[RMDB]
RNA sequence: GGGAACGACUCGAGUAGAGUCGAAAACAGGAAAUCACUACAGUCCACAAUGAGUUAUUCCCAACGAAGGAUAAAUGAUGGGAUGGUCUCCUACCAUCGUCAAAAGACUCAUUGGUGGGAGGGAAAAUCAACUUUUAUUCUUCGGAAUAAAAGUUGAAAAAGAAACAACAACAACAAC
Reactivity to 2A3 in 0.01 (KOAc 150mM, MgCl2 10mM, bicine 150mM(pH8.5), 24C), signal-to-noise 3, nucleotides 027 to 126: c030a010g080g160a060a100a080u190c040a060c100u190a120c080a080g080u020c010c000a020c010a010a020u020g010a010g020u010u020a060u100u030c000c010c010a040a050c100g100a110a050g000g020a020u090a080a080a020u100g030a010u060g030g010g050a020u090g020g070u040c080u090c090c000u010a020c000c010a000u020c020g000u010c020a110a080a020a000g020a020c000u030c020a010u020u050g140g030u050g000g070g030a050g040g020g020a000a050a020a100
Reactivity to DMS in 0.01 (KOAc 150mM, MgCl2 10mM, bicine 150mM(pH8.5), 24C), signal-to-noise 5, nucleotides 027 to 126: c130a170g010g010a060a120a070u020c080a110c080u010a130c120a080g000u000c000c000a040c030a020a030u000g010a030g000u000u000a130u000u000c000c010c030a130a100c270g010a110a100g020g000a060u010a070a080a050u010g010a050u010g010g010g000a060u000g000g000u010c080u000c020c020u000a190c000c000a000u000c040g010u010c080a040a080a090a130g010a020c000u000c010a020u000u000g020g030u000g000g000g000a040g000g000g000a060a060a080a090
The record gives the reactivity of an RNA of 177 nucleotides to 2A3 and DMS. It was measured as part of the RMDB library OK2TRN. For 2A3, 3,363 sequencing reads were counted. The DMS profile rests on 4,258 reads. High DMS reactivity at an A or C suggests that its Watson-Crick edge is free.